This 207-nucleotide RNA was probed chemically with 2A3 and DMS. DMS adducts were read by reverse transcription with MarathonRT. The data come from the RNA Mapping Database (RMDB), library M2RFPK.
[RMDB]
RNA sequence: GGGAACGACUCGAGUAGAGUCGAAAAUGCUGUCGUUGACAGCGCCCAACGCUUCACAACCUGAAAGAAGCGCCUGUUAUCAGGACGGUUGAUCCAUUUACCGGUGCAGACCUCUGCAAAUACCGGGUUUAACAAGCAUCUUUCGAGAUGCUUGUAAUGAUAAUGCCUGUUUCGACAGGCAUUAUCAAAAAGAAACAACAACAACAAC
Reactivity to 2A3 in 0.01 (KOAc 150mM, MgCl2 10mM, bicine 150mM(pH8.5), 24C), signal-to-noise 3, nucleotides 027 to 156: u190g000c000u020g000u050c130g300u120u290g000a000c000a010g000c000g040c010c010c000a010a030c010g000c000u000u010c010a030c040a090a000c020c000u000g000a010a010a010g000a000a000g000c000g020c000c000u120g060u170u200a180u300c020a010g000g020a010c020g010g000u000u000g000a050u080c040c030a060u060u110u210a100c000c000g020g000u010g000c010a000g120a300c040c150u230c000u200g000c010a000a130a000u150a020c000c000g000g000g020u040u120u050a060a000c000a000a000g000c000a000u010c000u000u130u050c210g100a020g000a010u000g000c000u000u000g000u000a000a030
Reactivity to DMS in 0.01 (KOAc 150mM, MgCl2 10mM, bicine 150mM(pH8.5), 24C), signal-to-noise 2, nucleotides 027 to 156: u000g000c000u020g020u010c020g030u030u000g020a020c020a000g030c030g000c050c000c000a180a100c010g000c000u000u030c000a260c090a110a080c060c000u000g000a180a200a300g000a090a010g020c050g040c020c070u000g010u000u010a120u020c070a060g030g000a090c080g030g000u000u010g000a260u000c060c040a150u000u000u000a100c020c000g000g040u020g000c010a040g010a270c160c300u000c020u000g010c020a120a070a150u000a090c020c020g010g000g020u000u010u000a140a050c000a010a010g000c010a010u000c000u000u000u020c260g010a040g030a020u000g020c010u000u000g020u000a020a090